[RMDB]
RNA sequence: GGGAACGACUCGAGUAGAGUCGAAAAUAUUACAUCUUCGGAUGUAAUAACUGGUGGUGGCUGGCUAGUUGCUAGUGGCGCAACUGUUGCCAUGACUGCGCAAUCGCUCUGAAUUCGUUCAGAGCAAUGCUGUCCUAAGGUUCGCCUUAGGACAGCAAAAAGAAACAACAACAACAAC
Reactivity to 2A3 in 0.01 (KOAc 150mM, MgCl2 10mM, bicine 150mM(pH8.5), 24C), signal-to-noise 1, nucleotides 027 to 126: u010a000u010u020a010c000a020u000c010u010u040c200g070g000a000u010g000u010a000a000u020a010a020c100u130g000g120u050g000g030u000g060g000c060u020g030g030c040u110a000g030u010u000g000c010u030a060g180u040g230g060c050g080c010a000a040c000u130g240u300u040g000c000c020a030u050g070a010c030u050g010c070g040c050a090a060u080c050g000c000u020c000u000g010a010a010u000u070c130g030u020u000c010a000g020a020g000c010a000a000
Reactivity to DMS in 0.01 (KOAc 150mM, MgCl2 10mM, bicine 150mM(pH8.5), 24C), signal-to-noise 1, nucleotides 027 to 126: u000a010u000u000a010c000a000u000c000u000u010c200g020g010a020u000g000u010a000a000u000a020a130c110u000g040g040u000g010g050u000g010g000c010u000g010g010c020u010a020g010u000u000g000c020u000a160g020u000g020g030c190g030c010a010a020c040u000g010u000u000g000c000c000a050u020g020a100c050u000g030c070g000c120a110a070u020c180g000c000u000c000u010g010a040a030u000u000c220g000u000u000c000a000g000a010g000c000a020a010

The record gives the reactivity of an RNA of 177 nucleotides to 2A3 and DMS. The DMS profile rests on 1,217 reads. For 2A3 the reverse transcriptase was SuperScript II with manganese.